[RMDB]
RNA sequence: GGGAACGACUCGAGUAGAGUCGAAAAUACUAAGAUGAUAAAUUAAUUCCUCUUCUACAGUCCUUACAUCCGGCUGUCUUUGAAAUCCAUGAAAAUGGGUGCCGAUAUAAGCAAUCUUUAAAGCAGAAAUAAAUACUGCUUUCGAGCAGUAUUUAUUAAAAGAAACAACAACAACAAC
Reactivity to DMS in 0.01 (KOAc 150mM, MgCl2 10mM, bicine 150mM(pH8.5), 24C), signal-to-noise 3, nucleotides 027 to 126: u030a100c110u010a040a090g000a110u010g010a170u030a060a070a080u040u030a100a110u010u020c000c010u000c070u030u010c050u010a070c110a070g010u010c040c010u010u000a070c050a060u000c070c070g000g010c050u020g010u020c030u010u000u020g010a090a130a050u010c010c000a030u000g000a090a040a140a040u000g010g000g010u000g020c060c040g020a130u040a100u020a070a070g000c040a060a060u020c030u010u010u010a040a080a070g010c080a060g010a080
Reactivity to 2A3 in 0.01 (KOAc 150mM, MgCl2 10mM, bicine 150mM(pH8.5), 24C), signal-to-noise 5, nucleotides 027 to 126: u190a040c090u130a090a070g040a100u200g030a080u150a130a160a100u170u150a030a110u090u040c010c000u020c030u080u020c020u050a070c030a020g040u060c000c010u040u090a020c020a060u040c040c010g000g000c010u020g050u070c060u060u080u040g060a120a070a020u000c010c010a020u020g080a060a080a060a080u020g040g000g000u020g010c020c010g090a060u050a030u010a170a030g020c020a060a070u050c040u000u150u180a140a100a000g030c040a030g110a080
Conditions: 150 mM KOAc, 10 mM MgCl2 and 150 mM bicine (pH 8.5), 24 C.
An RNA of 177 nucleotides, treated with DMS and 2A3 and read out base by base.
DMS adducts were read by reverse transcription with MarathonRT.
Values cover nucleotides 27 to 126.
2A3 adducts were read by reverse transcription with SuperScript II with manganese.
It was measured as part of the RMDB library OK1LIB.